[RMDB]
Structure probing data (DMS and 2A3) for a 177-nucleotide construct.
For DMS the reverse transcriptase was MarathonRT.
For DMS, 2,944 sequencing reads were counted.

RNA sequence: GGGAACGACUCGAGUAGAGUCGAAAAGGGAACACUGCCAGGACACAUGACAGAGAGGUUUCAGGAAGCCAUUGACAACCUCGCCGUGCUCAUGCGAGCAGAGACUGGAAGCAGGCCUUAUAAGGCACAUAGAUGGCAACUUCGGUUGCCAUCUAUGAAAAGAAACAACAACAACAAC
Reactivity to DMS in 0.01 (KOAc 150mM, MgCl2 10mM, bicine 150mM(pH8.5), 24C), signal-to-noise 4, nucleotides 027 to 126: g000g010g010a090a080c120a110c030u010g020c030c050a070g000g010a090c180a080c060a050u010g000a060c050a100g000a160g030a040g020g010u000u010u000c040a050g010g010a160a140g030c090c060a090u010u010g000a060c220a030a040c050c010u000c030g010c110c090g000u000g030c100u000c010a030u000g020c110g000a060g010c060a050g010a080g030a120c030u000g000g010a070a080g010c080a080g000g020c000c010u000u000a070u010a060a090g020g020c030a160
Reactivity to 2A3 in 0.01 (KOAc 150mM, MgCl2 10mM, bicine 150mM(pH8.5), 24C), signal-to-noise 2, nucleotides 027 to 126: g090g000g030a100a000c070a000c090u030g000c050c020a030g010g010a020c000a000c000a110u080g030a040c020a030g130a000g020a020g060g060u020u100u070c000a040g040g070a090a060g060c020c030a100u020u070g040a040c060a050a020c000c000u010c020g050c080c020g150u040g000c040u010c020a050u130g100c080g030a030g000c020a010g020a010g000a070c040u020g010g030a040a000g030c100a040g070g080c000c000u150u090a150u030a180a060g000g020c030a010